Description
Structure probing data (2A3 and DMS) for a 207-nucleotide construct. For 2A3, 3,780 sequencing reads were counted. 2A3 adducts were read by reverse transcription with SuperScript II with manganese. The RNA was probed in 150 mM KOAc, 10 mM MgCl2 and 150 mM bicine (pH 8.5) at 24 C. For DMS, 5,119 sequencing reads were counted.

RNA sequence: GGGAACGACUCGAGUAGAGUCGAAAAGCCCCUACGUGUAGUGUCUGUAAUACUACAGACAUUUCAUAUGGGGAAGGUUCAGAGACUAAAUGGGUGUGGGUGCGUUACUCUUGAAGUGACAAGCUUAAGAUAUAGUCCGGCUUCAGUAGAAAUGCUGCUUCAAAGCAUAGUUCGCUAUGCUUUGAAGAAAAGAAACAACAACAACAAC
Reactivity to 2A3 in 0.01 (KOAc 150mM, MgCl2 10mM, bicine 150mM(pH8.5), 24C), signal-to-noise 5, nucleotides 027 to 156: g040c010c000c010c000u030a010c020g020u010g010u030a000g010u000g000u000c000u000g000u020a090a140u110a300c150u010a010c010a000g000a000c000a000u010u010u040c010a010u020a060u090g000g000g000g010a040a020g060g010u070u110c050a020g040a020g010a090c020u080a070a070a130u140g010g030g020u100g020u070g030g010g010u030g030c020g020u030u020a040c020u030c000u100u150g110a140a010g010u010g030a050c040a050a020g000c010u080u090a070a020g030a030u060a020u050a100g010u000c030c030g020g010c010u060u040c010a050g010u070a010g050a030a040a020u060g010c010u020g010
Reactivity to DMS in 0.01 (KOAc 150mM, MgCl2 10mM, bicine 150mM(pH8.5), 24C), signal-to-noise 3, nucleotides 027 to 156: g030c030c000c000c000u010a040c050g070u010g010u000a030g060u000g030u000c000u000g020u000a060a240u000a250c200u010a100c000a010g000a020c000a000u000u000u000c010a040u000a040u020g000g010g050g040a100a050g020g020u000u000c050a130g000a160g010a100c040u010a040a110a160u000g020g010g030u010g040u000g010g010g020u000g000c160g000u000u000a050c050u000c030u000u010g010a090a050g010u000g020a070c060a030a250g020c040u010u000a070a080g000a120u000a130u000a080g000u000c000c020g010g010c000u000u000c020a060g020u000a060g010a110a110a130u000g010c010u010g010